[RMDB]
An RNA of 177 nucleotides, treated with DMS and 2A3 and read out base by base. Conditions: 150 mM KOAc, 10 mM MgCl2 and 150 mM bicine (pH 8.5), 24 C.
RNA sequence: GGGAACGACUCGAGUAGAGUCGAAAAAGGACGAUCUGCUGCUCAGCCCCGAGCGUCGGCGCGCCCUGUUCAUGAUCGACGUGGACCAUUUUAAGCAGAUCAACGACGCGCUCGGACACCAUGUCGGCAUUCCACUCGGUUUCGACCGAGUGGAAUGAAAAGAAACAACAACAACAAC
Reactivity to DMS in 0.01 (KOAc 150mM, MgCl2 10mM, bicine 150mM(pH8.5), 24C), signal-to-noise 3, nucleotides 027 to 126: a060g020g010a110c110g010a010u000c000u000g000c020u010g010c060u000c090a150g020c110c080c030c110g010a040g040c020g020u010c050g040g010c040g050c040g020c050c030c050u020g010u010u000c110a100u010g010a130u010c050g000a030c040g040u000g010g020a270c080c100a110u000u000u010u000a080a050g010c010a040g000a010u010c010a070a140c140g000a080c030g000c030g010c010u000c060g020g000a110c130a110c030c020a030u010g030u000c010g010g020
Reactivity to 2A3 in 0.01 (KOAc 150mM, MgCl2 10mM, bicine 150mM(pH8.5), 24C), signal-to-noise 2, nucleotides 027 to 126: a010g060g040a030c030g010a030u010c000u000g020c010u020g030c030u080c070a060g040c010c030c020c040g000a010g020c000g060u070c020g050g060c000g010c000g040c020c040c010u060g070u040u060c100a090u140g120a160u100c010g030a030c010g020u000g000g060a100c050c040a190u150u140u010u070a050a000g000c020a000g030a030u010c000a010a070c080g040a020c010g000c000g000c020u040c040g020g040a040c030a070c070c020a020u020g000u010c000g000g000